The record gives the reactivity of an RNA of 170 nucleotides to 2A3 and DMS. The 2A3 profile rests on 22,933 reads. For DMS, 22,844 sequencing reads were counted.
RNA sequence: GGGAACGACUCGAGUAGAGUCGAAAACUACAGGGUCCGCGUUCCAUCCUUUCUUACCUGAUGGCCGGCAUGGUCCCAGCCUCCUCGCUGGCGCCGGCUGGGCAACAUUCCGAGGGGACCGUCCCCCAAAUCCAGUACUUCGGUACUGGAAAAAGAAACAACAACAACAAC
Reactivity to 2A3 in 0.01 (KOAc 150mM, MgCl2 10mM, bicine 150mM(pH8.5), 24C), signal-to-noise 9, nucleotides 027 to 129: c020u090a020c030a040g050g020g010u030c030c030g070c040g080u060u050c020c010a070u060c040c010u090u160u070c040u110u110a110c040c030u080g050a090u050g090g020c000c010g020g000c020a070u110g050g020u120c010c000c000a010g010c000c010u080c020c020u090c060g030c040u050g040g020c040g000c020c000g020g010c000u030g010g000g010c030a100a030c010a090u130u000c030c010g020a040g010g020g000g010a000c010c010g070u040c010c000c000c000c010a000a040a040
Reactivity to DMS in 0.01 (KOAc 150mM, MgCl2 10mM, bicine 150mM(pH8.5), 24C), signal-to-noise 6, nucleotides 027 to 129: c050u000a000c060a130g070g000g040u000c000c110g000c090g020u000u000c020c030a130u020c040c080u030u040u040c070u010u060a140c160c100u050g040a120u050g000g000c080c000g010g060c040a110u050g030g040u000c170c000c000a110g020c000c050u030c040c020u030c130g020c040u030g040g040c180g000c020c020g000g000c030u050g000g000g000c030a120a080c090a130u070u000c000c070g000a090g000g000g000g000a100c080c070g030u040c070c010c020c040c040a040a020a090
Overview
2A3 adducts were read by reverse transcription with SuperScript II with manganese. It was measured as part of the RMDB library 15KLIB.